[RMDB]
RNA sequence: GGGAACGACUCGAGUAGAGUCGAAAAGAUAUGGAAGGUGACCACGCCCUGCACGAUGAAAUCGGAAACGAUGGAGUGCUGGGUAUCAACCUUCCUAAGUCAAAAGGACUUAGUUCGCUAAGUCCAAUCUUAGUCAAGAGUUCGCUCUUGACUAAGAAAAAGAAACAACAACAACAAC
Reactivity to 2A3 in 0.01 (KOAc 150mM, MgCl2 10mM, bicine 150mM(pH8.5), 24C), signal-to-noise 4, nucleotides 027 to 126: g010a010u080a050u140g000g010a000a000g020g000u020g020a050c040c040a100c300g030c000c000c000u030g000c010a020c010g190a300u060g010a030a040a010u010c020g010g000a060a070a050c010g020a020u030g000g020a010g010u000g000c010u030g030g000g010u010a010u030c010a010a080c000c000u000u000c000c000u000a060a010g070u020c030a020a020a070a250g000g000a000c000u010u010a000g030u080u080c300g000c150u000a000a000g000u000c000c000a010a010
Reactivity to DMS in 0.01 (KOAc 150mM, MgCl2 10mM, bicine 150mM(pH8.5), 24C), signal-to-noise 4, nucleotides 027 to 126: g010a050u010a300u000g000g010a010a010g000g010u000g010a180c300c300a090c230g000c000c010c020u000g000c010a010c000g000a110u010g000a060a110a010u000c000g010g000a080a060a160c000g000a010u000g000g000a080g020u000g000c000u000g000g000g020u000a020u000c080a140a050c000c000u010u000c000c010u000a020a070g010u010c040a070a070a110a130g010g000a030c010u000u000a000g000u000u010c260g000c010u000a000a010g010u000c000c000a040a030